[RMDB]
RNA sequence: GGGAACGACUCGAGUAGAGUCGAAAAACACCAAAACUGAAGACGGAAGGCAAUCCUUCCACGACGAUACUUACUUUCCUUUGAUCGUCGUUACUACUGGCAUAGCCACAAAGGAGAACAAACAUGAGCGCGGACACUGACUUCGGUCAGUGUCCAAGUCUAUAUACGGGUUCGCCCGUAUAUAGACAAAAGAAACAACAACAACAAC
Reactivity to 2A3 in 0.01 (KOAc 150mM, MgCl2 10mM, bicine 150mM(pH8.5), 24C), signal-to-noise 7, nucleotides 027 to 156: a020c080a090c020c050a050a070a050a070c140u190g030a090a020g070a070c070g010g000a000a010g010g010c130a060a230u260c000c000u010u000c010c000a000c010g000a000c000g010a000u090a160c010u090u040a030c020u050u140u060c010c020u030u010u050g020a010u010c000g010u000c000g000u020u060a030c030u020a020c010u010g000g010c040a260u100a120g030c000c010a040c030a020a030a010g050g010a020g030a060a030c050a100a110a020c060a110u210g070a070g130c150g010c100g050g000a000c010a000c000u010g000a000c000u030u050c150g040g000u000c000a000g000u000g000u000c000c000a000a000
Reactivity to DMS in 0.01 (KOAc 150mM, MgCl2 10mM, bicine 150mM(pH8.5), 24C), signal-to-noise 2, nucleotides 027 to 156: a040c050a200c010c040a070a070a060a300c160u010g000a130a120g000a090c090g030g010a110a030g060g050c100a130a140u000c030c020u000u020c020c030a080c050g020a020c000g010a050u000a020c100u010u000a060c110u000u010u000c030c030u010u000u000g000a030u000c000g030u020c010g020u000u000a040c060u020a070c030u020g010g070c000a090u000a060g020c000c020a060c070a020a040a060g010g020a050g020a100a140c090a080a090a160c060a090u010g000a120g010c030g040c220g000g050a020c000a010c000u000g000a030c010u000u000c300g040g000u000c000a030g000u000g000u000c010c000a010a030
This 207-nucleotide RNA was probed chemically with 2A3 and DMS. The reactions ran in a buffer of 150 mM KOAc, 10 mM MgCl2 and 150 mM bicine (pH 8.5), at 24 C. 2A3 adducts were read by reverse transcription with SuperScript II with manganese. The 2A3 profile rests on 5,676 reads.